[RMDB]
RNA sequence: GGGAACGACUCGAGUAGAGUCGAAAAUAUUUGUAACAAUAUCUUGUUCUAAUCCAAUAUCUUUCGCUAAUUCUGUCAUAAUCGUUUUUCUACCUAAAUAAGAUUCAGGCCCUAGUUCAAUCAUAUACUCAAAGAGUUCAUUCGUGAACUCUUUGAGAAAAGAAACAACAACAACAAC
Reactivity to DMS in 0.01 (KOAc 150mM, MgCl2 10mM, bicine 150mM(pH8.5), 24C), signal-to-noise 1, nucleotides 027 to 126: u010a020u000u000u020g020u000a110a080c060a110a050u000a030u010c140u040u000g020u000u020c040u000a050a110u020c020c060a090a070u050a050u020c060u000u010u020c070g000c130u020a080a090u000u020c020u000g030u000c030a050u000a070a110u000c050g020u000u000u000u030u010c030u000a060c080c020u010a070a020a080u000a060a070g020a300u000u000c020a110g010g010c010c020c010u000a050g000u000u000c150a070a060u000c020a020u000a070u000a180

This 177-nucleotide RNA was probed chemically with DMS.